Conditions: 150 mM KOAc, 10 mM MgCl2 and 150 mM bicine (pH 8.5), 24 C. This 207-nucleotide RNA was probed chemically with 2A3 and DMS. For DMS the reverse transcriptase was MarathonRT. 2A3 adducts were read by reverse transcription with SuperScript II with manganese. Source: RMDB library ARCHII, as collected in RNAgym.

[RMDB]
RNA sequence: GGGAACGACUCGAGUAGAGUCGAAAAUCAGAGCACCUUUGAGGAUUUCUUGGGAUGGGGCCCGGUUCGAGACGCAUGGAAGCCUGAGUGGGGGUUGCUCGAUGGAAUGGGGGCAACCACAUGCUAGUGCUGGGCAUCCGUGCCUUGUGCGACGCCGCACCUAUAAGACGUUCGCGUCUUAUAGGUGAAAAGAAACAACAACAACAAC
Reactivity to 2A3 in 0.01 (KOAc 150mM, MgCl2 10mM, bicine 150mM(pH8.5), 24C), signal-to-noise 5, nucleotides 027 to 156: u100c030a020g020a020g050c010a030c020c030u100u150u210g070a090g040g020a080u080u100u040c010u050u070g030g010g010a030u050g010g000g010g020c000c010c010g010g030u020u040c070g030a060g010a080c060g010c000a010u020g000g060a070a060g050c000c030u080g050a070g080u250g010g050g010g000g000u000u010g010c010u010c030g120a170u110g040g100a090a060u100g110g010g000g000g000c000a000a000c020c010a020c000a020u040g010c000u040a020g020u010g050c000u030g010g010g020c010a080u010c000c000g020u020g050c000c010u020u030g030u030g010c020g020a030c040g020c030c010g000
Reactivity to DMS in 0.01 (KOAc 150mM, MgCl2 10mM, bicine 150mM(pH8.5), 24C), signal-to-noise 1, nucleotides 027 to 156: u010c030a110g030a130g040c010a060c020c040u000u010u000g010a130g040g010a110u000u000u000c070u010u010g010g000g010a120u000g000g000g040g010c000c000c000g020g020u000u000c040g050a280g000a080c140g000c050a040u000g030g010a070a130g020c020c030u000g000a170g020u010g000g010g070g070g000u010u000g020c010u010c020g030a170u020g030g010a070a110u000g010g020g000g000g020c030a060a050c020c000a020c000a030u000g010c060u010a070g000u000g010c030u020g010g030g060c010a040u000c040c050g010u000g010c020c040u000u010g000u000g010c000g000a130c050g010c000c030g010